[RMDB]
RNA sequence: GGGAACGACUCGAGUAGAGUCGAAAAGAUAUGGACGUACAAGCUCUAUGAAGGUAACAAGUGUCGGAAACGACACCGCCCUGGAGAGCUGGUACGUCCUAAGUCAAAAGCCUGCUUCGGCAGGCAAGACAUCCAAUACGUUCGCGUAUUGGAUGUCAAAAGAAACAACAACAACAAC
Reactivity to 2A3 in 0.01 (KOAc 150mM, MgCl2 10mM, bicine 150mM(pH8.5), 24C), signal-to-noise 3, nucleotides 027 to 126: g020a000u060a020u120g010g010a000c000g000u000a010c010a040a010g010c010u000c010u030a300u300g190a200a030g030g040u150a220a110c120a240a230g010u000g000u020c010g000g000a040a060a040c000g000a000c010a000c010c020g060c010c010c020u080g030g090a050g000a000g030c000u020g020g000u000a000c000g000u000c000c000u010a000a000g000u010c010a010a000a030a060g000c000c000u020g020c010u030u050c120g150g000c000a000g020g000c000a000a010
Reactivity to DMS in 0.01 (KOAc 150mM, MgCl2 10mM, bicine 150mM(pH8.5), 24C), signal-to-noise 4, nucleotides 027 to 126: g010a010u010a300u000g000g000a010c000g020u000a000c010a050a020g000c000u000c000u000a120u020g010a140a060g010g000u010a090a070c240a090a120g000u000g010u000c000g010g000a100a080a200c000g000a020c000a000c010c100g010c090c020c010u000g010g020a010g010a010g000c000u010g010g020u000a000c020g000u010c000c000u010a010a090g010u010c040a110a110a050a060g010c000c000u000g000c000u000u010c170g050g040c000a000g000g010c000a010a010